[RMDB]
RNA sequence: GGGAACGACUCGAGUAGAGUCGAAAAGCGGCAAAAGGAACGAAAAUCCAUGGACCGACCCCAUCGUCUCCACCCCGUAGGAACUACGAGAUUACCCCAAGGACGCCUUCGGCAUCCAGGGGUCGCGUAAACUGUGACGGUUCGCCGUCACAGUUUAAAAAGAAACAACAACAACAAC
Reactivity to DMS in 0.01 (KOAc 150mM, MgCl2 10mM, bicine 150mM(pH8.5), 24C), signal-to-noise 1, nucleotides 027 to 126: g000c010g060g000c070a060a050a160a090g020g010a030a040c030g000a150a100a070a110u010c020c030a090u000g010g010a150c090c030g030a140c060c050c010c040a180u000c080g000u010c060u010c010c040a190c030c010c000c010g050u010a060g020g010a050a130c130u000a040c060g010a050g000a150u010u010a030c000c070c000c020a060a140g030g000a060c060g010c010c030u060u000c060g000g040c000a060u000c000c010a200g000g000g000g030u000c110g000c080g010